[RMDB]
An RNA of 207 nucleotides, treated with 2A3 and read out base by base.
Values cover nucleotides 27 to 156.
For 2A3, 858 sequencing reads were counted.

RNA sequence: GGGAACGACUCGAGUAGAGUCGAAAAGAUGUUCGCUGAUUCGUCAGCAGCAUGCCCAGGUGGCCGCGAUCUUCAAGGCUACGGCGCGGAUAGGUCCGCGCUGAUCGUUUUCCUCCAACGACGCUAUAAAAGGAACGAAGGUUCGCCUUCGUUCCAAGCAUCCCGAAUAGUUCGCUAUUCGGGAUGCAAAAGAAACAACAACAACAAC
Reactivity to 2A3 in 0.01 (KOAc 150mM, MgCl2 10mM, bicine 150mM(pH8.5), 24C), signal-to-noise 1, nucleotides 027 to 156: g030a030u030g020u020u120c100g010c010u000g010a020u060u030c120g030u000c090a000g000c010a000g000c000a010u050g010c000c000c020a030g040g000u010g000g030c050c000g080c080g040a020u010c000u020u030c030a010a000g000g000c000u010a000c010g000g000c000g010c000g020g000a010u040a240g210g250u130c000c000g000c000g020c010u000g000a000u010c000g020u010u000u110u100c060c050u080c090c040a070a100c130g130a090c000g020c080u130a080u070a190a090a040a120g030g000a000a000c000g010a010a000g010g000u040u130c100g020c010c010u000u000c010g010u000u010c000c000a000a000